[RMDB]
Source information:
The record gives the reactivity of an RNA of 207 nucleotides to 2A3 and DMS.

RNA sequence: GGGAACGACUCGAGUAGAGUCGAAAACAGCAGCCUGGCACUCCCAGCUCAGAGAAGCCCUGUUCUUUGCUGGGGCCCGCAGGGAGCCAGGUAUCAGGACAGAUUUCUGAGACACGAAAGGUGCAGGUCUCCAGCUCCCGCUUUGCUGGGCCUGUGACUAAUAAUAAUGGUUCGCCAUUAUUAUUAGAAAAGAAACAACAACAACAAC
Reactivity to 2A3 in 0.01 (KOAc 150mM, MgCl2 10mM, bicine 150mM(pH8.5), 24C), signal-to-noise 4, nucleotides 027 to 156: c030a020g150c010a010g010c000c000u000g020g000c030a050c160u090c010c000c000a000g000c010u050c070a040g030a000g020a130a020g020c010c000c040u060g090u130u050c050u090u080u110g030c030u040g010g000g030g000c000c040c020g120c080a090g020g030g000a010g020c000c000a000g010g000u010a060u050c030a010g050g010a010c000a080g110a100u060u110u000c030u050g050a050g030a010c050a010c130g150a150a060a040g110g020u090g030c000a000g030g010u050c100u030c100c000a000g010c010u050c020c060c040g060c110u170u170u170g000c000u000g000g000g010c000c000u000g000u010g010a010
Reactivity to DMS in 0.01 (KOAc 150mM, MgCl2 10mM, bicine 150mM(pH8.5), 24C), signal-to-noise 3, nucleotides 027 to 156: c060a080g010c030a170g010c000c020u000g000g020c030a120c070u010c000c010c010a100g020c010u000c060a110g010a150g010a200a180g000c030c020c030u010g010u000u010c040u000u010u000g010c060u010g010g030g020g050c060c030c090g000c100a120g010g040g010a140g000c030c020a040g000g020u000a000u000c040a050g010g020a130c040a120g000a260u000u000u000c030u020g000a100g000a110c020a140c050g010a110a080a070g010g030u010g000c010a040g010g000u000c030u000c020c010a050g010c010u000c040c030c130g000c090u000u010u000g000c010u000g010g000g010c060c010u030g010u000g020a090

For 2A3 the reverse transcriptase was SuperScript II with manganese. For DMS the reverse transcriptase was MarathonRT. The DMS profile rests on 6,236 reads. The reactions ran in a buffer of 150 mM KOAc, 10 mM MgCl2 and 150 mM bicine (pH 8.5), at 24 C.